[RMDB]
RNA sequence: GGGAACGACUCGAGUAGAGUCGAAAAACACGUGUGGCGUGUGGUGCUUGUGAGAGAUGAAUUACAGGUGUGUAAUUGCCCUGGGCGCUUUGACCCGGCCGCGCUGGCCAACGAUGGGGCCUCGCGGGUAUAGCCCGAAAUUCGUUUCGGGCUAUACAAAAGAAACAACAACAACAAC
Reactivity to 2A3 in 0.01 (KOAc 150mM, MgCl2 10mM, bicine 150mM(pH8.5), 24C), signal-to-noise 1, nucleotides 027 to 126: a000c030a010c020g050u150g040u080g170g000c020g030u030g040u020g040g030u020g020c020u090u100g020u100g080a060g000a010g020a150u160g050a050a090u080u040a050c010a030g210g000u130g050u000g000u190a080a060u080u060g020c000c040c020u020g000g040g010c020g010c040u120u070u110g040a140c000c000c000g020g000c010c010g030c000g000c080u040g000g010c020c000a060a040c090g130a120u180g200g000g020g000c000c000u010c010g000c010g000g000
Reactivity to DMS in 0.01 (KOAc 150mM, MgCl2 10mM, bicine 150mM(pH8.5), 24C), signal-to-noise 5, nucleotides 027 to 126: a050c050a030c060g010u000g020u010g020g010c020g000u000g020u010g010g010u000g010c040u000u000g030u010g000a080g010a090g010a140u000g000a060a040u000u000a050c040a050g010g030u000g010u000g010u010a030a050u000u010g000c030c040c020u000g000g000g020c060g010c100u010u000u010g000a150c000c010c030g010g020c010c010g010c020g000c190u000g010g010c000c010a080a070c200g010a130u010g020g000g000g000c000c000u000c010g010c010g010g010
The record gives the reactivity of an RNA of 177 nucleotides to 2A3 and DMS.
Source: RMDB library OK2TRN, as collected in RNAgym.